[RMDB]
RNA sequence: GGGAACGACUCGAGUAGAGUCGAAAAGCAGGCGUCCAGCGCAGUGAGCUCCGUACAGCAGAUGCGGAUGGAAUGCCCCACACACCUUCUGGUGUUUCCAUAGUUCUGUCGCAAUGCGCCGGAUCAACCACUAGUAUGCCUUCGGGCAUACUAGUGGAAAAGAAACAACAACAACAAC
Reactivity to DMS in 0.01 (KOAc 150mM, MgCl2 10mM, bicine 150mM(pH8.5), 24C), signal-to-noise 2, nucleotides 027 to 126: g040c180a130g040g030c090g020u010c060c060a200g000c020g030c000a020g040u010g010a130g000c050u020c050c090g000u010a040c110a160g060c110a090g000a100u000g010c030g040g020a120u010g020g000a020a060u000g020c040c000c010c040a090c300a100c040a010c000c000u020u010c250u000g010g020u000g000u000u000u010c010c020a090u020a080g020u010u010c010u000g010u000c020g000c050a100a160u020g000c000g020c040c000g010g000a070u020c060a070a160
Reactivity to 2A3 in 0.01 (KOAc 150mM, MgCl2 10mM, bicine 150mM(pH8.5), 24C), signal-to-noise 1, nucleotides 027 to 126: g060c060a050g110g020c010g010u000c040c010a040g020c000g000c040a050g060u040g140a020g010c030u040c040c030g100u060a040c050a090g220c030a010g050a160u020g000c020g010g050a080u040g060g030a110a010u200g100c060c050c040c000a030c010a000c000a000c000c050u260u200c130u300g000g000u000g020u030u060u010c010c000a060u030a040g030u000u020c000u050g100u140c020g000c040a110a240u110g000c010g000c000c030g000g020a010u020c010a010a040